[RMDB]
RNA sequence: GGGAACGACUCGAGUAGAGUCGAAAAUUGAUUAAAUUAGUGUGAAUUUAGAGACGAAACCAACAUGGAAAUCUUUAAAGUUUUGGUUGAAUUUCUAUGUGCAUCGAAUUAUCCGUUUAUGGCCGGCGACUCGUAAUGGUUUCGACCAUUACGAGUCAAAAGAAACAACAACAACAAC
Reactivity to DMS in 0.01 (KOAc 150mM, MgCl2 10mM, bicine 150mM(pH8.5), 24C), signal-to-noise 1, nucleotides 027 to 126: u020u010g000a030u000u000a020a020a070u020u010a080g030u050g010u000g000a050a130u060u010u000a020g000a050g020a010c020g000a210a050a030c020c000a000a020c060a080u000g000g050a180a100a140u040c040u050u030u010a040a120a160g000u000u020u020u000g010g000u010u000g000a300a140u000u000u000c010u000a020u040g000u000g000c030a000u000c070g000a010a050u000u000a070u010c000c010g000u020u000u000a060u050g000g000c020c000g010g010c300
Reactivity to 2A3 in 0.01 (KOAc 150mM, MgCl2 10mM, bicine 150mM(pH8.5), 24C), signal-to-noise 3, nucleotides 027 to 126: u090u070g000a050u110u110a080a090a000u030u040a100g020u010g020u020g150a190a270u140u040u030a000g000a000g020a010c050g090a070a020a020c020c000a020a020c070a030u050g010g080a060a200a020u160c030u050u270u100a120a050a050g020u020u000u130u000g000g010u000u000g000a040a030u020u030u020c040u030a000u060g080u080g010c000a010u080c040g010a010a020u010u000a020u050c000c020g030u130u050u000a090u200g100g000c000c000g110g110c170